Chemical mapping of a 207-nucleotide RNA with 2A3. 2A3 is a SHAPE reagent: it acylates the 2'-hydroxyl of flexible nucleotides of all four kinds. Conditions: 150 mM KOAc, 10 mM MgCl2 and 150 mM bicine (pH 8.5), 24 C. The data come from the RNA Mapping Database (RMDB), library OK3TST.
RNA sequence: GGGAACGACUCGAGUAGAGUCGAAAAACGCGAUAGGUAACGAGGUACUUAAUCUGGACGAAAUUGACGAAAGCAACUUUACCGACACUCCGCUAAUCGUUAGCUACAGUCACCCCUGUGCGCUGUGCCGCAAGCGCGCACACAAGCACCCUCACCAUGAGCCUCCCUACUUCGGUAGGGAGGCUCAAAAAGAAACAACAACAACAAC
Reactivity to 2A3 in 0.01 (KOAc 150mM, MgCl2 10mM, bicine 150mM(pH8.5), 24C), signal-to-noise 1, nucleotides 027 to 156: a020c050g040c020g000a090u090a080g010g070u030a000a050c050g020a030g030g010u000a000c010u040u060a030a090u050c060u040g030g070a040c110g070a090a090a150u050u050g080a010c010g040a080a000a100g030c010a010a100c010u040u080u000a130c090c020g020a000c010a030c030u120c000c090g000c060u070a000a120u010c020g030u020u030a010g010c000u070a040c050a100g010u010c000a030c050c000c000c000u040g030u010g000c030g020c030u020g030u040g010c000c000g000c050a000a080g080c050g000c020g000c100a000c010a000c000a050a040g000c000a040c040c030c000u050c000a050c070c050a050